[RMDB]
RNA sequence: GGGAACGACUCGAGUAGAGUCGAAAACGGACGGCGCAGCUGGCCGGCCGACAGGUCACAGAGCUCGUGAUGCUCACCGCGCACGGCGACUGGCCGGCCGAUUCCGAAGUCGAGCUCUGGGACGGCCGACGGUUCGAAGUCAACGGGCCCGUGAGGGCCUGAAGGUAAAAUUCGUUUUACCUUCAGGAAAAGAAACAACAACAACAAC
Reactivity to 2A3 in 0.01 (KOAc 150mM, MgCl2 10mM, bicine 150mM(pH8.5), 24C), signal-to-noise 5, nucleotides 027 to 156: c030g020g020a010c030g000g040c050g020c090a030g010c030u040g070g020c090c020g010g010c010c000g030a120c100a090g120g120u030c030a020c010a050g000a000g000c000u010c010g060u070g080a130u190g060c010u050c030a060c030c020g030c010g010c070a300c210g040g040c040g210a300c140u160g160g000c000c010g000g020c020c010g010a020u080u030c070c050g040a050a010g070u100c010g000a000g000c000u000c000u000g010g010g020a020c000g010g000c000c000g000a010c010g020g000u040u070c020g030a070a010g020u020c010a010a070c040g030g050g000c000c030c010g010u050g050a150g030g010g040
Reactivity to DMS in 0.01 (KOAc 150mM, MgCl2 10mM, bicine 150mM(pH8.5), 24C), signal-to-noise 2, nucleotides 027 to 156: c000g030g010a050c000g000g000c030g020c040a150g060c030u000g050g040c030c010g030g010c060c020g010a050c070a060g020g020u000c010a080c020a040g000a030g020c020u000c040g010u000g010a210u010g000c070u010c050a100c030c020g010c140g010c050a130c010g010g020c030g000a130c120u010g030g000c000c000g020g000c040c000g000a050u010u000c020c050g020a070a120g020u010c020g010a060g020c020u000c020u010g000g000g010a050c020g010g000c010c000g010a040c000g000g010u000u000c040g000a110a080g010u010c010a110a060c000g030g030g000c000c010c000g000u020g010a160g010g010g020

Structure probing data (2A3 and DMS) for a 207-nucleotide construct. Source: RMDB library OK3TST, as collected in RNAgym. Reactivities are given for positions 27 through 156. DMS adducts were read by reverse transcription with MarathonRT. The RNA was probed in 150 mM KOAc, 10 mM MgCl2 and 150 mM bicine (pH 8.5) at 24 C. For DMS, 6,302 sequencing reads were counted.